RNA sequence: GGGAACGACUCGAGUAGAGUCGAAAAUCGAGAGGACAAACGAUGGUUCCCCUUUGUCUGCCUUUAGAGUGGUAAGGGAUCUAAUGUUUGCUCUAUAUAAUGACCGCUCAAAGAUGGAAUCAGAUUGUGAAUUGCCCUGAUUCGUCAGGGCAAUUCAAAAAGAAACAACAACAACAAC
Reactivity to 2A3 in 0.01 (KOAc 150mM, MgCl2 10mM, bicine 150mM(pH8.5), 24C), signal-to-noise 2, nucleotides 027 to 126: u060c050g020a070g070a030g040g170a100c100a000a110a000c060g120a010u040g010g030u020u020c000c020c000c030u130u140u070g010u040c040u020g050c000c000u060u070u010a110g090a010g000u010g050g000u040a050a010g030g000g060a030u010c110u110a160a040u120g060u130u100u300g000c010u000c010u000a100u000a000u050a090a140u090g070a070c000c000g000c010u020c030a000a000a050g040a020u140g110g000a010a120u090c000a080g030a240u030u090g180
Reactivity to DMS in 0.01 (KOAc 150mM, MgCl2 10mM, bicine 150mM(pH8.5), 24C), signal-to-noise 1, nucleotides 027 to 126: u000c080g030a180g040a300g000g000a060c140a100a110a100c090g000a120u040g020g000u020u040c000c000c000c250u010u010u030g000u000c050u000g000c010c000u010u000u080a010g000a030g000u000g040g000u000a100a040g000g000g000a040u070c090u010a100a070u040g000u000u040u000g000c000u070c040u000a280u080a070u000a140a190u000g010a010c010c020g000c000u000c000a070a140a030g030a070u000g040g010a060a050u000c070a230g010a140u010u020g000